[RMDB]
RNA sequence: GGGAACGACUCGAGUAGAGUCGAAAAAACACGUGGGUACGGCCCAGUGGGGGGGAGACGGACACGCCCUGGGCUCUGCCCAGGGUGCAGCCGGACUGACUGAGCCCCUGUGCCGCCCCCAGAUAAAUAUUUAGUAGGGAUUCGUCCCUACUAAAUAAAAAGAAACAACAACAACAAC
Reactivity to 2A3 in 0.01 (KOAc 150mM, MgCl2 10mM, bicine 150mM(pH8.5), 24C), signal-to-noise 1, nucleotides 027 to 126: a000a000c100a040c070g110u100g000g000g000u050a040c020g000g010c030c020c020a020g060u250g000g020g000g010g000g030g000a010g020a010c030g020g020a030c000a010c040g020c010c020c000u000g020g010g050c070u100c150u300g000c000c000c000a010g010g000g000u000g000c000a000g000c010c010g030g000a060c010u020g050a040c010u040g050a060g140c000c000c000c010u000g000u010g000c020c000g000c000c020c020c010c000a000g030a150u140a070a160a000
Reactivity to DMS in 0.01 (KOAc 150mM, MgCl2 10mM, bicine 150mM(pH8.5), 24C), signal-to-noise 3, nucleotides 027 to 126: a080a070c060a060c140g020u000g000g000g010u010a050c040g010g000c010c040c010a030g010u010g030g010g010g000g010g000g010a080g000a110c000g010g000a020c020a210c020g000c000c010c000u000g000g010g000c000u020c210u010g010c000c000c000a020g000g010g020u000g000c030a070g000c000c000g000g000a130c030u000g000a130c050u000g010a300g000c000c000c010c000u000g010u010g010c000c010g010c260c040c000c000c020a050g000a120u000a070a070a130